The data come from the RNA Mapping Database (RMDB), library M2RFPK. An RNA of 207 nucleotides, treated with 2A3 and read out base by base. For 2A3, 417 sequencing reads were counted. The reactions ran in a buffer of 150 mM KOAc, 10 mM MgCl2 and 150 mM bicine (pH 8.5), at 24 C.

RNA sequence: GGGAACGACUCGAGUAGAGUCGAAAACGUGUCCGUCGGCGUAGCCGACAACAUGCCCAGGUAGCCCAGACCUUCAAGGCUACGGUGCGGUGCGACGCACGGUCUGAUUCUUCACAACGACGUUCACAAGAUCGGAUCACUUUCGAGUGAUCCGAAAAUGGAAGAUCCCUUUCGAGGGAUCUUCCAUAAAAGAAACAACAACAACAAC
Reactivity to 2A3 in 0.01 (KOAc 150mM, MgCl2 10mM, bicine 150mM(pH8.5), 24C), signal-to-noise 1, nucleotides 027 to 156: c040g000u000g020u030c070c150g000u000c030g010g080c200g190u240a050g030c000c000g000a020c000a000a000c000a020u020g000c010c020c020a030g030g030u000a000g000c000c130c280a000g000a000c000c000u030u030c060a000a000g000g010c000u000a000c000g000g020u000g000c000g000g020u200g130c200g240a130c000g060c000a020c020g010g040u020c020u000g000a010u170u000c080u130u140c060a070c020a300a190c040g060a050c040g080u060u110c080a040c020a240a170g020a250u040c000g000g010a000u000c030a000c000u040u030u010c030g010a000g020u000g000a000u010c000c000g000a010a000a010